[RMDB]
RNA sequence: GGGAACGACUCGAGUAGAGUCGAAAAGUGGCACAGUUCGCUGUGCCACAAAGGACUACCCGUCAGGGUUAAGGCCUUACGGACAGCCGGGUCCACUGCCGAAAAUCCGUAGCUUCGGCUACGGAAACCACGUGUACAGGUUCGCCUGUACACGUGGAAAAGAAACAACAACAACAAC
Reactivity to 2A3 in 0.01 (KOAc 150mM, MgCl2 10mM, bicine 150mM(pH8.5), 24C), signal-to-noise 2, nucleotides 027 to 126: g010u000g000g000c010a000c010a010g010u050u070c130g050c160u010g010u000g000c000c000a000c000a000a000a000g010g000a010c000u070a090c020c020c000g050u120c130a060g030g010g020u070u220a150a140g070g060c030c000u010u040a050c030g000g040a000c020a030g030c010c000g030g000g000u000c030c000a040c060u070g000c000c010g080a130a030a020a040u000c040c000g000u000a000g000c000u050u050c220g120g000c010u000a000c000g000g010a010a010a000
Reactivity to DMS in 0.01 (KOAc 150mM, MgCl2 10mM, bicine 150mM(pH8.5), 24C), signal-to-noise 1, nucleotides 027 to 126: g030u000g010g000c010a000c040a010g000u000u010c240g000c000u020g030u000g000c030c000a000c000a010a090a080g010g000a040c020u000a050c010c000c030g020u000c250a170g010g000g020u000u020a090a070g010g010c020c030u060u000a110c070g020g000a080c020a300g000c040c050g000g000g010u000c020c000a140c150u000g000c010c040g020a140a070a120a140u010c070c000g010u000a000g000c000u000u030c160g000g030c000u000a000c000g000g000a000a000a070

The record gives the reactivity of an RNA of 177 nucleotides to 2A3 and DMS. DMS adducts were read by reverse transcription with MarathonRT. High DMS reactivity at an A or C suggests that its Watson-Crick edge is free. The 2A3 profile rests on 2,357 reads. The data come from the RNA Mapping Database (RMDB), library M2PK50.